[RMDB]
RNA sequence: GGGAACGACUCGAGUAGAGUCGAAAACAGCUUCUGUGUCCUUUUCUCUGGGUGAGGAGGGGACAUUCAUGGGCAGAUGGUGACCUCUGGGGAAGGCAGCCCAGACUCCACUGGCCACCAUAUUUCCUUUUUCACAACUUUCUCACCCCUGUGGUUAGCUCGUAAAUCAGUUCGCUGAUUUACGAGCAAAAGAAACAACAACAACAAC
Reactivity to 2A3 in 0.01 (KOAc 150mM, MgCl2 10mM, bicine 150mM(pH8.5), 24C), signal-to-noise 2, nucleotides 027 to 156: c020a010g040c060u140u080c050u200g020u000g030u000c000c010u030u100u170u040c070u000c030u080g110g000g000u090g000a020g010g000a000g000g000g000g000a000c010a010u070u080c110a090u150g000g010g000c010a010g040a110u020g010g010u010g010a070c030c050u020c020u010g020g010g010g020a110a060g190g020c100a080g120c000c000c000a000g010a050c020u030c010c000a030c060u020g080g000c010c000a040c030c010a020u000a130u070u030u090c000c000u040u090u010u250u280c140a130c060a190a110c060u120u170u050c050u030c020a030c020c010c020c080u120g050u130g260g020u060u070a010